[RMDB]
RNA sequence: GGGAACGACUCGAGUAGAGUCGAAAACUGCUUAUGCUAAAGCUGCGUAAGUUCAGUUGAGCCUGAAUUUUAAGUGAUACUAUCUAGCUUAGAAUUUGGUCAUUUUUGAUAGUGUAGAUUGAAAUUUGACAAAUUUUAAUUGAAAUUAAAGUCUUAGCUAGUGAACUAUGUUCGCAUAGUUCACUAGAAAAGAAACAACAACAACAAC
Reactivity to DMS in 0.01 (KOAc 150mM, MgCl2 10mM, bicine 150mM(pH8.5), 24C), signal-to-noise 2, nucleotides 027 to 156: c000u000g030c020u000u010a010u000g010c000u010a090a100a170g020c240u000g000c000g050u000a020a060g020u020u000c030a010g010u000u000g010a230g010c050c020u000g020a020a010u000u000u010u000a010a050g000u000g000a300u000a030c000u000a010u000c000u010a300g000c000u010u000a040g010a010a020u000u000u000g060g000u060c110a180u000u000u000u000u000g000a020u000a010g020u010g000u000a100g000a040u020u000g010a010a030a000u000u010u000g020a100c090a090a090a040u000u010u010u010a000a040u000u000g010a240a040a140u000u000a060a110a140g020u010c020u000u000a090g020
Reactivity to 2A3 in 0.01 (KOAc 150mM, MgCl2 10mM, bicine 150mM(pH8.5), 24C), signal-to-noise 7, nucleotides 027 to 156: c000u010g000c000u030u010a000u010g000c010u090a230a130a280g120c180u080g000c020g010u000a000a000g000u130u230c030a000g000u000u010g030a020g030c000c000u020g020a010a010u010u000u010u000a010a000g010u010g020a000u000a070c000u000a000u000c000u000a000g010c000u010u000a010g010a030a020u060u060u140g110g050u180c110a240u090u150u170u200u240g010a000u000a000g000u000g000u000a000g000a010u000u010g000a000a000a010u030u010u050g010a010c010a020a030a020u020u010u020u020a010a000u010u000g000a000a010a030u130u150a260a230a030g010u000c000u040u140a030g010

Record summary
Chemical mapping of a 207-nucleotide RNA with DMS and 2A3. Reactivities are given for positions 27 through 156. The reactions ran in a buffer of 150 mM KOAc, 10 mM MgCl2 and 150 mM bicine (pH 8.5), at 24 C. Source: RMDB library RSTRND, as collected in RNAgym. For 2A3 the reverse transcriptase was SuperScript II with manganese.